[RMDB]
RNA sequence: GGGAACGACUCGAGUAGAGUCGAAAAGCAUGCGGAGGGCGUUGGCUGGCCUCCUAAAAAGCCAACAAAACAAUAAAUGCCGAACCUAAGGCUGAAUGCGAAAUUAUUAGCUUGUUUGACUCAGUAGAGGAAAGACUAGCUGCUUAAUUAGCAAAAGGUAUCGUCUAACCUUCGGGUUAGACGAUACAAAAGAAACAACAACAACAAC
Reactivity to 2A3 in 0.01 (KOAc 150mM, MgCl2 10mM, bicine 150mM(pH8.5), 24C), signal-to-noise 1, nucleotides 027 to 156: g050c060a020u240g070c080g110g010a070g030g000g030c160g000u020u030g040g000c090u030g070g140c040c000u130c000c010u010a000a000a000a000a070g010c020c000a040a000c000a020a000a010a030c030a040a290u300a270a100a010u150g090c000c000g090a100a060c000c010u070a090a120g000g000c000u020g010a120a090u030g010c000g010a010a000a000u010u020a080u000u020a000g020c010u020u050g010u100u010u000g020a030c000u000c050a140g270u050a100g140a000g000g030a150a040a000g000a000c020u030a010g000c010u000g020c010u080u000a020a020u000u030a000g000c000a000a170a000a000g060